[RMDB]
RNA sequence: GGGAACGACUCGAGUAGAGUCGAAAAGUUGACUGCGAAAAGCAGUCAACAUGGCUGACACGUGUUCAAGUGAGCCAAGGACACUCGAGAUGCAGCGUUUGCCGAGUGUCCGCAAGCAGCUGCAUCAAUAGAACCUAGGCUUCGGCCUAGGUUCUAUAAAAGAAACAACAACAACAAC
Reactivity to DMS in 0.01 (KOAc 150mM, MgCl2 10mM, bicine 150mM(pH8.5), 24C), signal-to-noise 1, nucleotides 027 to 126: g040u000u000g000a000c000u000g000c010g030a110a070a080a130g000c000a000g020u000c000a000a010c010a060u000g020g000c020u010g000a050c010a090c070g020u070g000u040u010c300a140a050g000u000g000a100g010c010c090a220a300g040g000a020c000a030c000u030c000g030a300g000a130u000g000c000a000g000c010g000u010u030u030g040c030c000g000a050g000u000g000u000c130c220g010c010a000a110g000c000a200g020c000u000g020c080a000u000c010a160
Reactivity to 2A3 in 0.01 (KOAc 150mM, MgCl2 10mM, bicine 150mM(pH8.5), 24C), signal-to-noise 2, nucleotides 027 to 126: g000u000u000g000a000c000u000g040c030g100a120a150a000a000g000c000a000g010u000c000a000a010c000a000u000g000g000c020u080g080a030c000a000c030g240u200g170u300u090c200a120a050g010u030g020a000g010c010c020a030a070g060g010a000c020a030c060u050c010g060a090g010a100u020g010c010a010g000c030g010u060u090u050g030c030c020g040a070g110u100g060u020c040c020g000c010a000a000g060c010a000g000c000u000g010c000a030u000c020a020
This 177-nucleotide RNA was probed chemically with DMS and 2A3. Reactivities are given for positions 27 through 126. For 2A3, 1,006 sequencing reads were counted. It was measured as part of the RMDB library OK1LIB. The reactions ran in a buffer of 150 mM KOAc, 10 mM MgCl2 and 150 mM bicine (pH 8.5), at 24 C.